RNA sequence: GGGAACGACUCGAGUAGAGUCGAAAAACCUCAGUCUUCGGACUGAGGUGAGCGGUGCAUGGUGGCCGUGGGAACUCCUCCUUGGUGACAAGGGCCCACGGGGUGCGGCACGCUUCGGCGUGCCGAAUCAUAUAGUAGGGUUCGCCCUACUAUAUGAAAAAGAAACAACAACAACAAC
Reactivity to DMS in 0.01 (KOAc 150mM, MgCl2 10mM, bicine 150mM(pH8.5), 24C), signal-to-noise 7, nucleotides 027 to 126: a030c000c000u000c000a010g010u000c000u000u010c200g030g000a020c000u000g000a000g010g010u000g000a040g010c070g000g010u000g010c060a060u000g000g010u000g010g010c010c010g010u000g000g000g000a130a070c080u010c080c070u010c010c000u000u000g010g000u020g000a220c040a010a010g000g000g010c010c000c000a010c010g010g000g000g020u000g020c010g010g000c000a010c010g010c010u000u010c100g020g010c000g020u000g000c000c000g010a010a040
Reactivity to 2A3 in 0.01 (KOAc 150mM, MgCl2 10mM, bicine 150mM(pH8.5), 24C), signal-to-noise 4, nucleotides 027 to 126: a000c010c000u000c000a000g010u000c010u020u140c210g120g010a010c000u000g000a000g000g000u010g000a030g010c070g060g070u100g030c060a080u120g060g070u120g100g110c010c000g000u010g000g020g000a080a070c070u070c060c010u030c010c010u030u020g030g000u090g040a030c010a010a010g000g000g010c010c000c010a000c010g000g010g010g000u080g040c030g010g000c020a000c000g030c010u010u040c150g090g000c010g010u020g020c000c000g000a000a040
Background
The record gives the reactivity of an RNA of 177 nucleotides to DMS and 2A3. Conditions: 150 mM KOAc, 10 mM MgCl2 and 150 mM bicine (pH 8.5), 24 C. The DMS profile rests on 30,295 reads. Reactivities are given for positions 27 through 126. For DMS the reverse transcriptase was MarathonRT. For 2A3 the reverse transcriptase was SuperScript II with manganese. The data come from the RNA Mapping Database (RMDB), library M2PK50.